[RMDB]
RNA sequence: GGGAACGACUCGAGUAGAGUCGAAAAAAACCUUAAAUUCUGUGAUGGGUCACAUGCAUCUAAUGAAUACAUACAGGACAAUUUGUUGUUUAUUGUCAGCUUUGAGUUUAGGAUGUAUCAUAGGCACGAUGAUUACGUUGUUCGCAACGUAAUCAUCAAAAGAAACAACAACAACAAC
Reactivity to DMS in 0.01 (KOAc 150mM, MgCl2 10mM, bicine 150mM(pH8.5), 24C), signal-to-noise 2, nucleotides 027 to 126: a040a070a040c010c010u010u010a100a060a060u030u000c040u000g000u000g020a050u010g010g010g010u020c060a080c110a110u000g000c030a030u000c040u010a090a060u020g000a060a040u000a080c080a050u020a060c110a110g020g020a000c060a030a030u000u000u000g020u000u000g000u000u000u010a090u040u000g010u010c010a040g000c110u000u000u000g010a170g020u000u000u010a110g010g000a020u000g010u000a040u000c060a040u000a060g020g010c210a100c220
Reactivity to 2A3 in 0.01 (KOAc 150mM, MgCl2 10mM, bicine 150mM(pH8.5), 24C), signal-to-noise 1, nucleotides 027 to 126: a000a000a000c160c000u220u080a160a230a060u300u110c070u100g010u040g090a080u120g080g160g100u030c030a010c010a040u110g030c020a030u020c020u100a220a050u070g080a060a010u030a050c030a010u090a010c000a050g150g000a010c010a030a020u000u020u040g010u000u000g070u030u080u060a100u010u070g000u000c010a020g060c030u000u000u210g020a030g020u010u010u120a050g020g010a060u020g050u030a040u010c000a020u090a020g030g000c040a000c100

Structure probing data (DMS and 2A3) for a 177-nucleotide construct. Values cover nucleotides 27 to 126. The DMS profile rests on 1,336 reads. The RNA was probed in 150 mM KOAc, 10 mM MgCl2 and 150 mM bicine (pH 8.5) at 24 C. It was measured as part of the RMDB library RFMREP.